[RMDB]
RNA sequence: GGGAACGACUCGAGUAGAGUCGAAAAGAAGAGAGUCGACGCAAGCGACGAUAACUGCGGAACGGUAACCGUAGUACCGUAAGGUCAUGGCACGCGAAAGCGAAAGACCGCAGCAUGCCAUAAGAGAACCUAGCUACCAUUUCGAUGGUAGCUAGGUAAAAGAAACAACAACAACAAC
Reactivity to 2A3 in 0.01 (KOAc 150mM, MgCl2 10mM, bicine 150mM(pH8.5), 24C), signal-to-noise 4, nucleotides 027 to 126: g110a100a020g120a010g010a010g000u050c020g030a140c030g060c170a100a110g030c020g040a030c030g000a020u060a060a060c030u030g000c000g000g030a070a020c020g080g030u090a100a030c010c010g080u070a030g050u020a040c000c000g060u070a030a060g060g050u090c020a000u020g000g000c000a020c010g020c000g080a180a110a050g000c000g040a100a030a010g110a060c070c020g000c000a000g000c000a000u010g000c000c010a030u060a090a030g070a020g040a050
Reactivity to DMS in 0.01 (KOAc 150mM, MgCl2 10mM, bicine 150mM(pH8.5), 24C), signal-to-noise 4, nucleotides 027 to 126: g020a090a080g000a090g000a120g030u020c030g010a160c040g010c160a130a070g020c030g000a010c010g020a060u030a060a120c010u010g000c020g000g000a210a010c010g030g020u030a050a140c090c130g010u040a070g000u000a010c000c000g030u050a090a050g000g030u000c100a040u000g000g000c020a060c000g040c010g030a110a080a100g000c030g020a120a080a110g000a120c030c000g000c040a050g010c050a100u000g000c000c010a020u010a120a090g020a110g000a110

This 177-nucleotide RNA was probed chemically with 2A3 and DMS. The RNA was probed in 150 mM KOAc, 10 mM MgCl2 and 150 mM bicine (pH 8.5) at 24 C. DMS adducts were read by reverse transcription with MarathonRT. The 2A3 profile rests on 3,967 reads.